[RMDB]
RNA sequence: GGGAACGACUCGAGUAGAGUCGAAAACUCCAAUCCUCUGAUGAUUUCGCUCUCAUCGUAAAUGCACCGAAUCAUGAGGGAAUACAAGCAGGAGUGGAUAGGUUUUAUAGGACUUGUAAACUAGUUGGAAUCAAUAUGAGCAAGAAGAAGUCUUACAACCCAGAAGAUGUUUCGACAUCUUCUGGGUAAAAGAAACAACAACAACAAC
Reactivity to 2A3 in 0.01 (KOAc 150mM, MgCl2 10mM, bicine 150mM(pH8.5), 24C), signal-to-noise 1, nucleotides 027 to 156: c000u020c000c000a010a060u040c000c000u000c000u140g020a000u020g000a000u020u190u110c020g010c030u010c010u010c000a070u060c130g150u130a070a150a080u210g000c120a180c250c030g010a040a000u020c000a030u020g050a020g080g010g000a000a050u150a090c070a060a020g000c050a060g010g020a020g030u010g030g060a030u100a060g060g050u020u020u130u150a040u080a100g000g020a020c010u000u000g100u180a070a140a010c030u050a080g050u060u010g060g040a020a020u140c020a040a000u040a090u120g050a000g000c020a000a000g000a010a010g010a020a010g060u020c010u000u000a020c050a080
Reactivity to DMS in 0.01 (KOAc 150mM, MgCl2 10mM, bicine 150mM(pH8.5), 24C), signal-to-noise 1, nucleotides 027 to 156: c020u020c010c020a110a150u000c000c020u000c010u000g020a040u000g000a110u000u000u010c020g050c030u000c050u000c020a080u000c200g030u020a060a070a080u000g060c020a130c100c010g020a050a030u000c020a010u000g020a040g020g050g000a080a020u000a050c040a060a200g000c050a110g000g020a070g010u010g000g010a110u030a020g000g000u030u000u010u010a060u000a190g020g000a050c020u000u000g010u000a050a050a200c040u000a070g050u000u000g040g000a050a110u000c020a030a080u010a100u010g010a070g070c060a080a060g020a050a100g000a110a080g050u000c020u000u000a030c040a120